[RMDB]
RNA sequence: GGGAACGACUCGAGUAGAGUCGAAAACGCUACGGAUAGAUCACAUUAUUAUGUGGAUUCCGUUACAGUUAAAGAGACUGUUGUUCAGUUUAAUUAUCGUAGAGACGGUCAACCAUUCUACGAGCGGGUUUAUCUUACUCUUCGGAGUAAGAUAAACAAAAGAAACAACAACAACAAC
Reactivity to 2A3 in 0.01 (KOAc 150mM, MgCl2 10mM, bicine 150mM(pH8.5), 24C), signal-to-noise 2, nucleotides 027 to 126: c020g000c030u020a000c010g000g010a030u070a070g170a110u170c000a000c000a000u020u150a090u230u190a020u170g010u020g000g010a020u040u010c000c000g000u000u060a050c040a060g020u030u060a090a040a000g080a010g010a030c030u010g020u050u030g040u060u050c030a050g010u000u010u090a090a090u080u060a020u060c010g000u000a000g020a000g060a080c100g050g010u100c020a080a120c110c000a040u100u000c010u010a000c000g020a000g000c010g050g070
Reactivity to DMS in 0.01 (KOAc 150mM, MgCl2 10mM, bicine 150mM(pH8.5), 24C), signal-to-noise 3, nucleotides 027 to 126: c070g010c070u010a030c010g000g000a090u010a120g000a170u010c000a020c000a000u010u020a140u010u020a040u010g040u000g020g000a170u010u000c010c000g010u000u020a050c080a070g010u000u010a030a060a100g020a130g010a050c040u000g000u000u000g020u000u000c090a180g010u000u000u000a050a090u000u000a100u000c000g020u010a010g010a080g000a070c150g000g000u010c300a110a090c010c020a150u010u000c010u000a020c010g010a000g010c220g010g000